[RMDB]
RNA sequence: GGGAACGACUCGAGUAGAGUCGAAAAAAAGUGUACGAAAGAACAAAGAUGCAAUCAAACCGAGUAGUGAAAUGAUGGCUUCAGUCCAAAAUGGGCAAACACUACAGACGGAGCCAAAGGCAAUUAAACAAAAGACAAGAUUCGUCUUGUCUUUUGUAAAAGAAACAACAACAACAAC
Reactivity to 2A3 in 0.01 (KOAc 150mM, MgCl2 10mM, bicine 150mM(pH8.5), 24C), signal-to-noise 3, nucleotides 027 to 126: a000a040a000g080u030g040u030a040c040g040a090a040a060g020a120a010c030a060a080a020g060a050u090g030c030a010a070u030c040a060a070a010c030c000g040a020g000u020a000g000u020g040a050a110a140u140g050a010u070g040g000c000u080u070c060a050g030u040c010c000a080a090a050a170u090g010g000g000c020a030a040a020c010a010c040u030a020c010a000g070a010c030g010g010a020g020c000c000a040a010a010g050g000c000a000a050u110u120a120a160
Reactivity to DMS in 0.01 (KOAc 150mM, MgCl2 10mM, bicine 150mM(pH8.5), 24C), signal-to-noise 5, nucleotides 027 to 126: a060a050a070g010u000g000u000a050c070g010a060a060a060g010a070a070c090a070a100a080g010a070u000g020c030a060a060u010c070a060a100a100c150c050g010a070g000u000a020g020u000g010a100a080a060u000g000a150u010g010g000c020u000u010c060a060g020u000c020c030a040a040a090a090u000g010g010g020c110a050a060a090c050a020c010u000a040c150a060g000a090c050g000g000a060g010c030c030a020a050a070g000g010c090a050a050u010u010a040a090